RNA sequence: GGGAACGACUCGAGUAGAGUCGAAAAUAUGAUUUUCGCUGGGCCUUAAGGGCUAUCAGGCAAGCUACUGAAGCGCGCACGGUAGUGAUGACCCUGUAAGGCCUAGUUAAGGCCUGUGCUGAAGCGCGCACGGCAACCGAAAGGUGCGUAGUCAAGACACUGUAUUUGAGUUCGCUCAAAUACAGUGAAAAGAAACAACAACAACAAC
Reactivity to DMS in 0.01 (KOAc 150mM, MgCl2 10mM, bicine 150mM(pH8.5), 24C), signal-to-noise 2, nucleotides 027 to 156: u000a060u000g000a070u010u000u000u000c030g010c040u000g000g010g000c010c000u000u010a090a080g020g020g010c000u000a080u000c020a040g030g000c040a020a170g020c010u000a010c000u000g020a090a050g070c020g010c000g020c000a300c010g030g050u000a000g090u060g010a130u000g000a020c300c030c040u000g030u020a090a150g020g020c000c000u030a020g000u000u000a080a080g010g060c010c000u000g000u000g000c040u010g020a100a110g050c020g030c000g040c000a300c030g000g000c010a030a100c040c000g010a120a070a220g040g030u010g010c020g020u000a140g000u000c030a040a190g000a300
Reactivity to 2A3 in 0.01 (KOAc 150mM, MgCl2 10mM, bicine 150mM(pH8.5), 24C), signal-to-noise 3, nucleotides 027 to 156: u270a080u040g030a020u020u220u120u180c010g000c010u010g000g010g020c000c010u030u010a040a060g100g030g020c020u020a040u200c000a010g030g030c050a040a020g000c000u000a000c000u010g020a190a030g020c020g010c010g000c010a020c000g040g000u000a000g010u010g120a290u030g000a020c000c000c000u030g020u080a180a100g040g030c010c000u010a000g000u000u010a010a000g010g000c000c000u010g000u010g000c010u040g020a170a070g010c010g000c000g000c020a020c030g000g020c040a030a040c010c010g060a170a000a020g040g000u020g000c010g020u020a040g030u040c020a020a020g050a080